[RMDB]
This 207-nucleotide RNA was probed chemically with DMS and 2A3. For DMS, 2,115 sequencing reads were counted. For 2A3, 948 sequencing reads were counted. The reactions ran in a buffer of 150 mM KOAc, 10 mM MgCl2 and 150 mM bicine (pH 8.5), at 24 C. For 2A3 the reverse transcriptase was SuperScript II with manganese.
RNA sequence: GGGAACGACUCGAGUAGAGUCGAAAAUCAUACAUAACCUAAACUGAUCAUUAUUAUACAGUGAUUUCCUAGAAAAUGAACUGAUGAGACCCAGACUAUCAUAGGACUAGAUCUUGUAGUGUAAUGCUGUGAGCCGUUCCCUUGGAAGGGCUAAGGAUCGUCACCUAAAUUUCGAUUUAGGUGACGAAAAAGAAACAACAACAACAAC
Reactivity to DMS in 0.01 (KOAc 150mM, MgCl2 10mM, bicine 150mM(pH8.5), 24C), signal-to-noise 1, nucleotides 027 to 156: u010c070a080u000a140c050a160u010a040a100c020c030u000a060a070a260c060u000g010a110u000c040a020u010u000a030u020u000a180u010a130c080a070g000u010g000a070u000u000u000c020c010u010a100g010a070a050a080a060u020g000a100a210c020u000g010a080u010g010a080g020a040c020c000c010a110g020a140c020u000a060u010c090a120u010a060g030g060a080c050u010a060g010a060u000c010u010u000g010u000a050g040u000g000u000a070a080u000g000c010u000g020u000g030a000g000c000c010g020u010u000c000c010c050u000u010g020g010a060a040g010g020g020c010u010a060a030g010g000a110
Reactivity to 2A3 in 0.01 (KOAc 150mM, MgCl2 10mM, bicine 150mM(pH8.5), 24C), signal-to-noise 3, nucleotides 027 to 156: u050c000a020u060a160c010a080u120a060a150c060c070u140a180a090a060c050u090g070a090u090c050a020u010u150a050u060u110a100u060a120c040a010g010u040g080a040u010u040u070c010c060u120a110g150a050a130a070a090u090g020a050a050c030u070g030a050u090g020a010g000a100c020c030c070a010g000a050c020u020a040u100c030a110u070a070g020g040a050c020u060a030g000a070u010c000u000u040g010u020a060g020u020g090u140a040a080u080g020c010u060g060u050g030a000g000c010c010g010u010u010c000c000c000u020u070g040g000a060a030g000g000g000c000u050a030a020g040g010a030